[RMDB]
RNA sequence: GGGAACGACUCGAGUAGAGUCGAAAAGAUAUGGAGUCCAUGGGACAUGCUUUAGGGUCGGAAACGACCCGAAGAGCAACAGCCCAGGACUCCUAAGUCAAAACAUACGACGUUCGCGUCGUAUGAAGUCAUACGCAUCGUUCGCGAUGCGUAUGACAAAAGAAACAACAACAACAAC
Reactivity to DMS in 0.01 (KOAc 150mM, MgCl2 10mM, bicine 150mM(pH8.5), 24C), signal-to-noise 1, nucleotides 027 to 126: g020a010u000a170u000g000g020a060g030u000c000c000a150u000g070g000g020a010c090a300u000g030c000u000u000u000a300g000g030g000u000c030g050g000a000a050a100c040g000a000c030c000c010g010a070a100g010a000g030c000a020a000c200a050g000c000c000c000a030g000g000a000c000u000c010c030u070a010a100g000u030c000a080a030a120a300c000a000u000a010c000g030a000c010g040u000u060c300g050c000g030u000c010g010u000a010u000g010a050a110
Reactivity to 2A3 in 0.01 (KOAc 150mM, MgCl2 10mM, bicine 150mM(pH8.5), 24C), signal-to-noise 1, nucleotides 027 to 126: g000a020u030a060u050g000g000a020g000u000c050c100a300u040g000g020g070a060c250a300u300g020c000u150u200u030a090g010g000g000u010c000g000g000a040a010a030c000g020a000c020c030c010g000a040a040g000a000g000c030a000a090c180a070g010c000c000c000a000g010g000a000c000u020c000c010u000a000a000g000u010c010a000a000a080a090c000a020u020a010c020g000a020c010g000u030u140c300g000c000g150u000c000g010u000a000u000g000a020a020